[RMDB]
Structure probing data (DMS) for a 177-nucleotide construct. Conditions: 150 mM KOAc, 10 mM MgCl2 and 150 mM bicine (pH 8.5), 24 C.
RNA sequence: GGGAACGACUCGAGUAGAGUCGAAAAAACUUGAUGGUUUUCUCUCUAAGAGUUUGUAAUCCAUUGGUUCAAUAGAGAAACAGCUGAUUAUAAAAAUUCUAGGUCAGGUUUGAACGGAGUAUACAGCAGAAAGAUGCAUAUUCGUAUGCAUCUUUCUAAAAGAAACAACAACAACAAC
Reactivity to DMS in 0.01 (KOAc 150mM, MgCl2 10mM, bicine 150mM(pH8.5), 24C), signal-to-noise 1, nucleotides 027 to 126: a010a000c010u000u000g010a060u000g020g000u010u010u010u010c040u000c050u020c080u000a090a100g010a030g000u010u000u000g010u000a040a020u000c010c060a090u030u010g000g000u010u000c030a110a150u020a180g000a170g000a030a030a020c030a020g030c300u000g000a020u000u000a040u000a010a070a150a070a110u000u000c030u010a110g020g000u000c020a040g000g000u000u000u000g000a080a130c110g010g010a070g000u010a080u010a060c130a070g030c160
The DMS profile rests on 862 reads.